[RMDB]
RNA sequence: GGGAACGACUCGAGUAGAGUCGAAAAUAUGAUCUUGCAAAGCUCCAGCAACUAUUUCUGAAGCAGAUGCAGAAUUACCGUUUAUUAAAACAAUCAUAGGUACUUUUGGGGCUUUUAACGAAAACUCACAAACUCAAUAAUUCGUUAUUGAGUUUGUAAAAGAAACAACAACAACAAC
Reactivity to 2A3 in 0.01 (KOAc 150mM, MgCl2 10mM, bicine 150mM(pH8.5), 24C), signal-to-noise 9, nucleotides 027 to 126: u270a100u120g080a050u050c040u040u120g050c050a010a050a000g000c000u010c010c010a020g030c040a050a100c060u120a120u140u100u020c040u060g070a140a050g060c100a040g040a160u140g030c010a000g030a020a020u070u030a030c010c010g030u050u100u050a110u050u180a130a120a050a030c070a040a040u130c050a050u110a100g000g030u060a060c050u060u110u100u060g000g010g000g000c020u010u020u020u060a040a020c030g030a030a040a030a030c040u050c020
Reactivity to DMS in 0.01 (KOAc 150mM, MgCl2 10mM, bicine 150mM(pH8.5), 24C), signal-to-noise 7, nucleotides 027 to 126: u040a090u020g010a090u000c040u020u010g010c080a030a130a100g020c000u000c010c000a060g010c210a080a110c150u010a050u010u020u010c040u000g020a090a070g010c120a050g010a170u020g000c000a050g000a060a020u010u020a050c070c050g020u010u000u000a090u030u020a070a050a060a080c120a060a090u020c100a060u020a110g000g010u010a040c190u000u010u010u000g010g000g000g000c030u000u010u000u010a050a080c110g000a060a060a070a080c100u010c080